[RMDB]
RNA sequence: GGGAACGACUCGAGUAGAGUCGAAAAAGCGCCUAUACGUAGGCGCAACUUUCGAGGAGCGUUGCAACUCCCGCCCGGGAGCCAGGCUCGAAAGUCAUCCCCCGAUGCAACGGCGCUCACCCGCAAAUUAUUGCAGGAAGUUCGCUUCCUGCAAUAAAAAAGAAACAACAACAACAAC
Reactivity to 2A3 in 0.01 (KOAc 150mM, MgCl2 10mM, bicine 150mM(pH8.5), 24C), signal-to-noise 4, nucleotides 027 to 126: a000g010c000g000c000c000u010a020u030a040c300g080u030a010g010g010c000g010c000a000a020c000u010u010u010c010g000a020g020g030a110g050c030g030u050u030g000c010a020a050c010u010c010c000c000g160c060c080c060g000g000g000a030g040c120c020a040g000g030c000u000c000g020a000a010a010g010u030c020a130u050c010c000c000c010c020g030a030u100g020c020a040a010c010g000g010c010g000c000u010c000a040c010c020c010g030c090a040a060a070
Reactivity to DMS in 0.01 (KOAc 150mM, MgCl2 10mM, bicine 150mM(pH8.5), 24C), signal-to-noise 3, nucleotides 027 to 126: a100g000c000g010c000c000u000a010u030a110c190g030u010a020g000g010c000g040c030a020a010c020u020u000u000c000g000a010g060g000a090g000c020g000u010u000g000c030a130a300c000u000c000c000c000g020c260c160c220g030g000g010a030g010c080c090a060g010g000c020u000c010g010a010a020a000g010u010c130a160u030c030c020c010c120c080g000a140u040g000c030a080a030c020g000g010c040g010c030u060c070a130c070c040c030g010c100a060a100a160